This 207-nucleotide RNA was probed chemically with 2A3. Reactivities are given for positions 27 through 156. The reactions ran in a buffer of 150 mM KOAc, 10 mM MgCl2 and 150 mM bicine (pH 8.5), at 24 C. 2A3 adducts were read by reverse transcription with SuperScript II with manganese.
[RMDB]
RNA sequence: GGGAACGACUCGAGUAGAGUCGAAAAAGCGCGCAUACUAUGGUAUGCGCGCAAUCAGAAAUCGGGAAUGAUGUUCUCCCCUGGGAUUCCAAAACCGCUGUUUCGCUGAUGACGUCUGCUUUUUUAAUCACCACCGUUUGGUUCGCCAAACGGUGAAGCUAUCCAUACAGUUCGCUGUAUGGAUAGCAAAAGAAACAACAACAACAAC
Reactivity to 2A3 in 0.01 (KOAc 150mM, MgCl2 10mM, bicine 150mM(pH8.5), 24C), signal-to-noise 1, nucleotides 027 to 156: a010g020c000g020c020g080c000a010u040a020c050u170a070u270g200g020u010a010u010g020c040g000c010g020c010a000a000u000c030a020g230a020a090a030u090c030g000g020g000a000a070u050g030a040u040g040u060u040c010u030c080c010c010c000u070g010g010g070a060u030u080c070c000a030a030a060a070c040c010g070c050u060g010u040u050u050c020g010c040u040g060a040u050g020a050c010g070u050c020u010g090c060u150u050u010u000u030u220a080a110u070c060a030c070c000a000c000c000g000u000u000u000g010g000u000u090c130g040c050c000a000a000a000c000g000g000u000g010a000a000